[RMDB]
RNA sequence: GGGAACGACUCGAGUAGAGUCGAAAAUAACGUGAAUUCGACGAGGUGGUGGUACUCUCCUUCACCUGCUUGGCUGCUUUGAUGGAUCCGUUGCCGGAAUUCGUCGUGAUCUCACCCACCACUAAAAUAUGGCAUACGCUUUCGAGCGUAUGCCAUAAAAAGAAACAACAACAACAAC
Reactivity to 2A3 in 0.01 (KOAc 150mM, MgCl2 10mM, bicine 150mM(pH8.5), 24C), signal-to-noise 1, nucleotides 027 to 126: u100a000a000c050g120u150g010a010a070u080u050c000g050a000c000g030a040g000g010u060g010g000u000g020g000u070a040c040u000c030u070c000c000u080u100c000a030c020c000u000g020c000u040u030g080g000c050u070g010c020u010u060u120g120a090u100g020g020a010u010c070c020g030u230u020g000c060c070g000g040a190a120u080u010c000g020u040c060g030u080g110a130u000c030u040c010a030c000c010c030a050c020c000a040c060u070a000a020a000a260
Reactivity to DMS in 0.01 (KOAc 150mM, MgCl2 10mM, bicine 150mM(pH8.5), 24C), signal-to-noise 1, nucleotides 027 to 126: u100a060a160c240g000u080g000a000a080u010u000c040g000a070c040g000a210g000g020u000g000g050u000g000g000u040a040c110u000c170u020c020c020u000u000c040a040c100c040u000g000c050u040u020g010g000c070u000g000c120u000u000u000g000a050u000g050g000a000u000c000c020g000u090u050g040c280c030g000g000a120a170u000u010c000g040u000c010g000u010g020a050u000c080u040c070a060c000c010c010a080c120c030a000c030u050a120a000a120a070
Structure probing data (2A3 and DMS) for a 177-nucleotide construct. It was measured as part of the RMDB library OK1LIB.